[RMDB]
RNA sequence: GGGAACGACUCGAGUAGAGUCGAAAAGGGUCAUGAGAUUCCCAAUCAAUUGGGGUUCCAGGUCAGUUCAUUCUCCUGUGCUUGAUUACUUCAAUUGCCUCGGUCAUGGAUGAGUGGCCUUAAGUUAUACCUAAACAGCAUUCGUGCUGUUUAGGUAAAAAGAAACAACAACAACAAC
Reactivity to 2A3 in 0.01 (KOAc 150mM, MgCl2 10mM, bicine 150mM(pH8.5), 24C), signal-to-noise 2, nucleotides 027 to 126: g000g000g000u030c020a020u100g050a040g050a220u060u090c000c000c000a010a030u070c030a020a040u030u030g000g000g020g000u030u010c050c010a000g000g000u010c010a020g050u090u100c030a050u250u030c070u050c050c010u060g080u090g080c020u080u010g020a200u080u130a050c040u040u010c010a040a000u060u060g020c000c020u050c060g040g040u120c060a080u150g090g000a060u070g040a020g020u040g000g000c000c000u030u060a050a000g030u070u110a110
Reactivity to DMS in 0.01 (KOAc 150mM, MgCl2 10mM, bicine 150mM(pH8.5), 24C), signal-to-noise 6, nucleotides 027 to 126: g010g010g010u000c030a070u010g010a160g000a190u000u000c000c000c010a140a150u010c070a050a060u010u010g010g000g000g010u000u000c080c020a020g010g010u000c030a030g000u000u010c130a080u010u000c090u000c120c010u000g010u010g010c040u000u000g000a080u000u010a040c060u000u000c010a010a040u010u000g000c140c040u010c110g020g000u000c110a070u010g000g000a060u010g010a150g020u000g010g000c010c010u000u000a040a080g010u000u010a160
This 177-nucleotide RNA was probed chemically with 2A3 and DMS. For 2A3 the reverse transcriptase was SuperScript II with manganese. For 2A3, 2,165 sequencing reads were counted. High DMS reactivity at an A or C suggests that its Watson-Crick edge is free. The RNA was probed in 150 mM KOAc, 10 mM MgCl2 and 150 mM bicine (pH 8.5) at 24 C.